[RMDB]
RNA sequence: GGGAACGACUCGAGUAGAGUCGAAAAGAUAUGGAAGAUGAUACAUCAUCGAUCAUGCCGGUCGGAAACGACCGCAUGGGAGAUGUCAUCUUCCUAAGUCAAACCAGGACGCUUCGGCGUCCUGGAACAUCCAGAGGAGCUUCGGCUCCUCUGGAUGAAAAGAAACAACAACAACAAC
Reactivity to DMS in 0.01 (KOAc 150mM, MgCl2 10mM, bicine 150mM(pH8.5), 24C), signal-to-noise 1, nucleotides 027 to 126: g010a070u000a050u010g000g000a060a000g000a000u010g000a300u030a040c300a050u000c000a300u000c200g010a060u000c000a000u010g000c170c120g020g020u000c000g040g000a000a010a090c020g010a000c000c010g060c020a000u000g000g000g000a050g030a030u000g020u000c000a010u000c000u000u000c000c000u000a000a050g010u000c010a160a150a300c000c000a020g040g000a010c010g010c000u000u030c190g010g000c030g020u000c000c000u000g000g000a070a100
Reactivity to 2A3 in 0.01 (KOAc 150mM, MgCl2 10mM, bicine 150mM(pH8.5), 24C), signal-to-noise 1, nucleotides 027 to 126: g000a000u010a000u070g020g020a000a020g010a000u030g060a030u080a300c020a050u020c020a030u300c040g000a000u030c000a010u030g090c250c260g030g000u030c000g000g000a030a010a020c000g000a010c060c020g000c020a000u000g000g000g020a060g000a000u010g000u000c010a000u050c020u000u020c000c010u000a010a000g020u030c050a000a110a190c010c000a020g000g000a010c000g000c040u110u220c300g250g000c000g060u000c000c000u000g000g000a010a000
The record gives the reactivity of an RNA of 177 nucleotides to DMS and 2A3. The reactions ran in a buffer of 150 mM KOAc, 10 mM MgCl2 and 150 mM bicine (pH 8.5), at 24 C. For 2A3, 1,677 sequencing reads were counted.